[RMDB]
RNA sequence: GGGAACGACUCGAGUAGAGUCGAAAAACUUCUUCAAAACCAGCAGGAGAAUCUUGCUCUAGUCUACCACAUAACCUAAUCACAGGAGCGGCUAUCCCGUUAUUUUCACAGAUCCUGGUCACAUUCAAGGGGAGGGAACCCUUCUGUGUGUGUACACCACAUGUCCAUGAUUCGUCAUGGACAUGUGAAAAGAAACAACAACAACAAC
Reactivity to DMS in 0.01 (KOAc 150mM, MgCl2 10mM, bicine 150mM(pH8.5), 24C), signal-to-noise 2, nucleotides 027 to 156: a130c070u000u000c040u000u000c060a060a030a080a110c070c130a150g000c030a080g000g000a060g000a080a020u010c040u010u010g040c040u000c060u030a130g010u000c040u000a050c030c020a060c080a050u010a030a080c050c010u020a090a120u000c000a120c020a050g040g020a030g020c050g070g000c020u000a110u000c050c020c010g020u000u000a110u000u000u020u000c010a050c060a090g000a200u000c040c010u000g030g020u010c080a130c070a080u010u000c050a060a000g000g000g000g000a130g050g010g000a090a100c000c000c000u010u010c010u020g000u020g040u000g000u010g020u000a050c010a110c070
Reactivity to 2A3 in 0.01 (KOAc 150mM, MgCl2 10mM, bicine 150mM(pH8.5), 24C), signal-to-noise 6, nucleotides 027 to 156: a000c030u050u030c020u060u040c040a080a050a140a170c050c060a030g050c050a020g040g030a030g010a070a070u110c020u040u070g000c000u000c000u020a020g010u020c020u050a060c010c030a090c020a220u170a130a100c010c070u070a080a070u110c000a030c010a020g000g010a010g010c140g040g000c060u110a050u060c000c010c010g020u080u070a150u110u160u110u150c120a120c020a060g100a090u030c000c000u030g040g020u080c040a040c010a140u160u120c040a120a050g000g000g030g020a080g050g050g060a190a300c000c000c000u010u000c000u010g020u000g000u000g010u010g020u020a020c040a020c050